[RMDB]
RNA sequence: GGGAACGACUCGAGUAGAGUCGAAAAACAAGUGGUGGUAGUCCGCCACUCUAAGGGGACGCCUUUAGAAGAAGAGGCUAGGGGGUAUUCCGGUGUGGGAUACUCAGUAAUAUGCAACGCUAAUUGCUCAAGGAUAGAUGAUUCGUCAUCUAUCCAAACAUUAGUCGACGUUCGCGUCGACUAAUGUAAAAGAAACAACAACAACAAC
Reactivity to 2A3 in 0.01 (KOAc 150mM, MgCl2 10mM, bicine 150mM(pH8.5), 24C), signal-to-noise 1, nucleotides 027 to 156: a010c100a130a060g010u030g000g010u050g040g060u000a010g020u040c000c000g010c000c000a000c010u000c000u000a000a030g000g020g010g090a040c110g210c020c000u030u000u030a020g000a060a000g000a010a000g070a140g010g000c020u010a000g030g010g010g020g000u000a020u020u020c030c020g200g050u300g060u250g160g000g000a000u000a000c000u010c000a000g030u030a000a140u060a050u270g000c000a020a030c070g000c160u130a000a200u050u090g010c070u070c140a150a120g000g000a000u000a000g010a010u010g010a010u040u100c220g010u000c140a000u030c000u010a000u000c000c000a010a000